Source information
Chemical mapping of a 177-nucleotide RNA with 2A3. Conditions: 150 mM KOAc, 10 mM MgCl2 and 150 mM bicine (pH 8.5), 24 C.

RNA sequence: GGGAACGACUCGAGUAGAGUCGAAAAAUCAUUUAGCGUGACUUUCUUUCAACAGCUAACAAUUGUUGUUACUGCCUAAUGUUUUUAGGGUAUUUUAAAAAAGGGCGAUAAAAAACGAUUGGGGGAUCUUGUUGUUCGAAUUCGUUCGAACAACAAGAAAAGAAACAACAACAACAAC
Reactivity to 2A3 in 0.01 (KOAc 150mM, MgCl2 10mM, bicine 150mM(pH8.5), 24C), signal-to-noise 2, nucleotides 027 to 126: a000u090c030a040u070u010u060a010g030c000g040u050g040a020c000u140u120u020c000u030u230u120c160a190a180c020a060g020c060u040a010a040c020a090a150u080u000g000u030u010g050u000u080a070c000u130g040c000c000u110a070a070u080g010u090u020u010u020u020a050g120g000g050u110a160u010u150u050u180a010a090a030a030a010a050g070g020g010c090g030a030u070a040a120a000a010a000a000c040g020a010u040u060g020g000g040g000g020a010u020